[RMDB]
RNA sequence: GGGAACGACUCGAGUAGAGUCGAAAAGAAGUGGAAGAGGCUGCUCAAUUCCUUGAAUCAGAAACAGUUUGACGCGUACAAAUCUCGCUCGGUUGAUGAGACUCCAAGAGGUGACUAUGUGUCAAGAAGUGAAGGAGAAGUUCGCUUCUCCUUCACUAAAAGAAACAACAACAACAAC
Reactivity to 2A3 in 0.01 (KOAc 150mM, MgCl2 10mM, bicine 150mM(pH8.5), 24C), signal-to-noise 2, nucleotides 027 to 126: g060a030a000g030u060g030g020a030a050g050a070g190g040c020u010g030c010u080c060a040a110u060u000c000c000u020u080g150a050a090u140c050a040g140a080a070a020c040a020g010u000u040u070g020a010c010g010c000g010u000a030c020a030a110a010u020c020u000c010g020c040u060c060g050g040u050u090g070a090u130g020a050g040a040c020u000c090c000a000a070g010a010g040g000u030g000a010c010u010a020u030g060u020g000u000c000a000a060g030a050
Reactivity to DMS in 0.01 (KOAc 150mM, MgCl2 10mM, bicine 150mM(pH8.5), 24C), signal-to-noise 4, nucleotides 027 to 126: g010a070a080g020u010g020g000a110a090g020a140g000g010c040u010g000c030u000c060a040a170u000u000c040c000u000u010g030a090a120u010c100a120g000a120a080a080c100a090g000u010u000u010g000a010c020g010c010g010u000a020c070a030a200a020u000c010u000c010g030c150u010c200g000g020u000u010g000a180u000g000a220g000a050c040u010c100c130a090a130g010a010g010g000u000g010a300c300u000a020u000g000u010g010u000c010a030a010g000a050